[RMDB]
Chemical mapping of a 207-nucleotide RNA with 2A3.
RNA sequence: GGGAACGACUCGAGUAGAGUCGAAAAUCCUAAGUCCCUUUCUCUAGCGUGGACCUAAUCACAAAUUGUCAGCAUGAUCGGAAACGAUCAUGCUUGGAUUUAUUUGUGAUGGUCUCGGGAAGGGAUAUGGAAAAACACAGUCGUUCGCGACUGUGAACUACAGCAGAUGCUUCGGCAUCUGCUGUAGAAAAGAAACAACAACAACAAC
Reactivity to 2A3 in 0.01 (KOAc 150mM, MgCl2 10mM, bicine 150mM(pH8.5), 24C), signal-to-noise 1, nucleotides 027 to 156: u030c000c000u010a080a010g050u000c000c000c000u030u110u000c180u040c060u140a170g110c080g140u290g060g000a000c000c020u150a140a040u000c000a000c010a030a000a000u040u030g010u000c000a000g000c000a000u000g000a000u010c000g030g090a100a100a070c000g000a000u000c000a000u000g000c050u000u030g000g000a000u080u280u060a020u000u000u010g000u000g000a020u050g030g000u000c000u000c020g000g000g010a000a010g000g000g000a000u000a020u020g000g050a000a070a000a090a000c000a020c010a030g000u000c000g010u060u120c220g020c020g090a000c000u000g000u000g000a000a000

Notes
Conditions: 150 mM KOAc, 10 mM MgCl2 and 150 mM bicine (pH 8.5), 24 C. It was measured as part of the RMDB library RNAMAK. For 2A3, 1,038 sequencing reads were counted.